[RMDB]
RNA sequence: GGGAACGACUCGAGUAGAGUCGAAAAGCCACGUCGUCUUGCAUGCGCAUGAGCGCGGUCAUCUUGGGCCGGUGCUCGGCACAUACUCUGUCGCGAAGCUGACCGGCGGCGCGGCGAACAGCGUCGGGGUUAACAUUAUCUUCGGAUAAUGUUAACCAAAAGAAACAACAACAACAAC
Reactivity to DMS in 0.01 (KOAc 150mM, MgCl2 10mM, bicine 150mM(pH8.5), 24C), signal-to-noise 9, nucleotides 027 to 126: g010c000c010a050c010g010u000c010g010u000c020u010u010g010c070a020u000g010c040g010c010a070u010g000a020g010c000g020c010g010g010u000c010a110u010c280u010u010g030g010g010c000c000g020g020u010g030c010u000c000g010g010c010a020c010a020u000a050c050u010c220u010g020u000c020g000c030g000a080a100g010c030u000g000a070c110c300g000g000c000g000g010c010g010c020g000g000c000g000a060a080c120a060g010c070g010u000c030g010g000
Reactivity to 2A3 in 0.01 (KOAc 150mM, MgCl2 10mM, bicine 150mM(pH8.5), 24C), signal-to-noise 9, nucleotides 027 to 126: g020c000c010a020c010g020u020c000g010u010c040u090u110g020c040a030u050g000c010g000c060a220u180g010a010g010c030g010c020g010g000u010c020a140u070c170u170u240g150g010g000c010c010g120g060u110g010c010u000c000g010g010c010a010c000a020u070a040c020u050c070u200g020u040c010g010c020g140a110a040g010c100u120g060a100c030c060g000g000c000g010g010c000g000c000g000g000c010g000a040a020c040a020g070c020g090u070c040g070g090
This 177-nucleotide RNA was probed chemically with DMS and 2A3. For 2A3, 38,597 sequencing reads were counted. The data come from the RNA Mapping Database (RMDB), library OK2TRN. Conditions: 150 mM KOAc, 10 mM MgCl2 and 150 mM bicine (pH 8.5), 24 C.